[RMDB]
RNA sequence: GGGAACGACUCGAGUAGAGUCGAAAAGCGCGGCACUUCUUCCGAAAAUGCAGCCAUAGCCGCUUGCAUGAUUGCCUCUAAUUGCUCUUUGUCUUUGUGCGUCUUAAUCCAGGUUAGUUUAGUGUUACCAUUCUUAUCAACUAACUUUGACUCGCCAACGUAUUACUGGAUUCGUCCAGUAAUACGUAAAAGAAACAACAACAACAAC
Reactivity to DMS in 0.01 (KOAc 150mM, MgCl2 10mM, bicine 150mM(pH8.5), 24C), signal-to-noise 6, nucleotides 027 to 156: g020c070g020c040g010g040c020a120c110u000u000c050u000u010c070c040g010a090a090a110a070u000g010c020a030g030c030c030a150u010a150g030c050c020g030c030u010u000g050c040a070u000g010a090u000u000g020c020c020u000c070u000a100a120u000u000g010c020u000c080u000u000u010g030u000c030u000u000u010g020u010g020c030g020u000c050u010u000a060a130u000c040c050a080g010g010u000u000a010g010u010u000u000a110g010u010g020u000u000a110c090c080a140u000u000c070u010u000a130u000c050a050a050c020u000a030a020c020u000u000u010g010a060c020u000c040g020c020c030a090
Reactivity to 2A3 in 0.01 (KOAc 150mM, MgCl2 10mM, bicine 150mM(pH8.5), 24C), signal-to-noise 8, nucleotides 027 to 156: g060c060g000c010g040g000c030a030c060u090u030c020u120u050c080c020g050a080a060a020a040u070g000c020a010g020c040c030a140u170a070g070c100c050g010c030u060u150g000c010a030u050g020a110u080u110g020c040c000u050c050u090a120a130u090u080g020c010u030c020u100u090u080g050u030c010u040u090u070g070u130g030c020g050u010c040u080u160a070a060u020c010c030a010g010g010u010u010a010g000u020u030u050a090g020u070g090u130u120a150c050c040a090u140u080c040u100u130a130u130c020a010a020c010u010a000a010c000u040u010u050g010a030c010u020c030g030c050c010a010
The data come from the RNA Mapping Database (RMDB), library OK3TST. The record gives the reactivity of an RNA of 207 nucleotides to DMS and 2A3. The DMS profile rests on 21,267 reads. DMS adducts were read by reverse transcription with MarathonRT. Conditions: 150 mM KOAc, 10 mM MgCl2 and 150 mM bicine (pH 8.5), 24 C.